[RMDB]
RNA sequence: GGGAACGACUCGAGUAGAGUCGAAAAAGUAACAAUGAAACACUAUCAAGCGAUGGUGGCGUUCACAUGCGCUACCUUAAGGGUAAAGGCGAUGUGCUUUCAAUCUUAAAGAGUAAAAGUCCAGCUACAUACUCUAUCUGUUCGCAGAUAGAGUAUGAAAAGAAACAACAACAACAAC
Reactivity to 2A3 in 0.01 (KOAc 150mM, MgCl2 10mM, bicine 150mM(pH8.5), 24C), signal-to-noise 8, nucleotides 027 to 126: a000g150u110a080a040c060a060a100u110g050a080a060a000c010a010c030u080a040u060c030a120a080g140c060g120a030u030g000g020u010g020g010c020g030u080u070c110a040c010a130u190g080c010g000c010u010a000c000c000u010u050a080a070g130g000g010u090a120a070a030g050g000c020g030a040u040g000u030g040c020u010u050u030c030a040a050u000c010u050u220a170a140a020g100a040g030u070a040a120a070a020g040u010c020c000a020g030c030u030a050
Reactivity to DMS in 0.01 (KOAc 150mM, MgCl2 10mM, bicine 150mM(pH8.5), 24C), signal-to-noise 8, nucleotides 027 to 126: a060g010u010a050a080c130a100a080u000g000a090a040a070c020a030c030u000a020u000c020a150a180g020c220g020a040u000g010g020u000g000g010c090g010u010u000c100a040c110a040u010g010c020g010c010u000a020c000c010u000u010a050a090g010g010g000u000a050a060a050g000g010c020g010a070u000g020u000g000c070u000u000u000c050a080a080u000c040u000u010a060a080a110g000a090g010u000a040a060a070a100g010u000c020c030a080g000c120u010a140
Structure probing data (2A3 and DMS) for a 177-nucleotide construct. For DMS, 12,503 sequencing reads were counted. The RNA was probed in 150 mM KOAc, 10 mM MgCl2 and 150 mM bicine (pH 8.5) at 24 C.